[RMDB]
RNA sequence: GGGAACGACUCGAGUAGAGUCGAAAAUUUGCUCGUGGCCUUGUCUUUGUCUGCAUGACGGACACGAAGGGGGGUUGUUGAAUGAAGGCAUUCGUUCAACAACUGUAGGAGGCACUGCUUUUGUCACACAAUGCUUGGUUUUCGAACCAAGCAUUGUAAAAGAAACAACAACAACAAC
Reactivity to DMS in 0.01 (KOAc 150mM, MgCl2 10mM, bicine 150mM(pH8.5), 24C), signal-to-noise 2, nucleotides 027 to 126: u000u000u010g040c050u000c050g000u000g000g000c030c010u010u000g000u020c020u000u000u000g020u000c080u000g010c130a160u000g000a070c050g000g000a040c030a050c170g020a060a090g000g000g020g010g000g000u000u000g010u000u000g000a020a010u000g000a020a010g020g020c300a090u000u000c000g000u000u000c000a000a000c010a000a000c010u000g020u000a070g020g000a110g000g000c030a040c090u000g020c050u000u000u000u000g000u000c070a130c190
Reactivity to 2A3 in 0.01 (KOAc 150mM, MgCl2 10mM, bicine 150mM(pH8.5), 24C), signal-to-noise 1, nucleotides 027 to 126: u030u040u150g020c030u040c080g050u050g000g130c020c000u040u070g020u050c000u050u110u090g020u010c040u050g070c040a080u210g060a110c010g000g000a030c020a030c100g070a070a090g000g000g000g000g000g040u010u000g010u000u020g000a000a000u020g000a020a000g060g040c070a040u000u000c000g030u000u000c000a010a000c000a000a030c000u020g050u050a030g060g080a030g000g000c050a010c030u020g020c010u000u050u120u000g060u030c010a010c000